[RMDB]
RNA sequence: GGGAACGACUCGAGUAGAGUCGAAAAUGUGGUUCCUCGCACCACGCGAGAUGCGCGCCGUUGGGCGUCGACUCAUGGGCUUCGCGUUCGACGGCAGCCAGAUCUACACCGGCGUCGUCACCGACAUUGACGGCGAUGGGCUGGAGUUCAACAGACCGACCUAAAGCUUUUUCGAAAGCUUUAGGUCAAAAGAAACAACAACAACAAC
Reactivity to 2A3 in 0.01 (KOAc 150mM, MgCl2 10mM, bicine 150mM(pH8.5), 24C), signal-to-noise 3, nucleotides 027 to 156: u140g000u050g040g010u080u070c020c010u000c020g000c000a110c120c030a060c110g060c030g040a020g000a050u120g060c120g010c020g000c040c020g000u010u010g000g000g040c020g050u210c050g040a010c010u100c190a230u250g070g130g000c060u070u030c010g010c010g000u020u000c010g000a010c000g020g000c000a000g000c000c010a030g000a080u030c010u040a040c040a030c030c000g080g000c020g040u030c000g010u010c000a030c030c050g100a090c050a150u090u110g010a000c000g000g020c010g010a050u060g010g060g000c010u040g020g000a030g010u070u090c030a050a030c040a060g120a040c130c030
Reactivity to DMS in 0.01 (KOAc 150mM, MgCl2 10mM, bicine 150mM(pH8.5), 24C), signal-to-noise 2, nucleotides 027 to 156: u000g030u000g000g020u000u000c050c050u000c020g000c160a200c070c040a070c130g030c090g040a130g030a150u000g020c110g030c070g050c020c000g000u010u010g000g010g050c010g010u010c010g000a050c040u000c060a180u000g060g050g010c070u000u000c040g020c030g010u030u000c040g010a030c000g000g080c010a050g050c000c050a120g040a100u000c010u000a020c050a050c010c060g040g000c010g030u000c040g020u040c010a040c020c010g060a130c070a170u020u000g000a060c000g000g010c000g010a080u010g000g010g010c040u000g000g010a160g010u000u000c050a100a170c050a120g000a150c050c030